[RMDB]
RNA sequence: GGGAACGACUCGAGUAGAGUCGAAAACGCGCGGAUCAUCUCAUAUUGUUCCUCGGGGCGCGCUCCCCAGCCACAUAUAGCCCCGAGAAGAGAAGCCAUCGCGGGCGGGUACUGGCCCUUGGGCGCGCGGACGCAAUGGGGCAGGAAGACGGGAACCGAAGUAUAAGUCUUUCGAGACUUAUACUUCAAAAGAAACAACAACAACAAC
Reactivity to DMS in 0.01 (KOAc 150mM, MgCl2 10mM, bicine 150mM(pH8.5), 24C), signal-to-noise 1, nucleotides 027 to 156: c080g000c050g030c070g040g090a110u020c050a070u090c020u010c040a230u010a150u030u000g030u010u000c040c010u000c000g040g010g010g070c010g030c130g050c060u000c020c030c020c030a100g070c020c070a080c070a130u020a150u010a190g030c000c000c010c010g000a030g010a050a060g010a090g010a090a180g010c020c040a060u010c050g000c040g020g030g000c030g020g030g010u010a100c050u010g020g000c010c020c000u000u010g020g010g010c020g000c010g020c060g010g000a140c040g000c050a070a030u000g000g000g000g000c030a070g000g010a060a080g000a090c130g020g000g000a070a090c130c040
Reactivity to 2A3 in 0.01 (KOAc 150mM, MgCl2 10mM, bicine 150mM(pH8.5), 24C), signal-to-noise 2, nucleotides 027 to 156: c040g010c010g000c020g030g020a100u050c030a050u040c090u030c040a090u130a120u230u240g040u170u100c000c010u010c030g010g000g000g030c030g010c020g020c040u070c020c010c000c010a020g040c050c050a080c030a090u230a040u100a110g010c000c030c030c000g000a000g000a010a000g000a000g010a090a000g030c000c050a040u070c050g000c070g030g060g000c110g000g050g010u080a100c090u100g070g000c000c010c030u020u070g070g090g000c000g020c030g000c070g100g030a040c000g000c030a000a040u090g000g000g000g000c020a010g040g040a040a040g050a020c050g020g000g000a010a030c060c030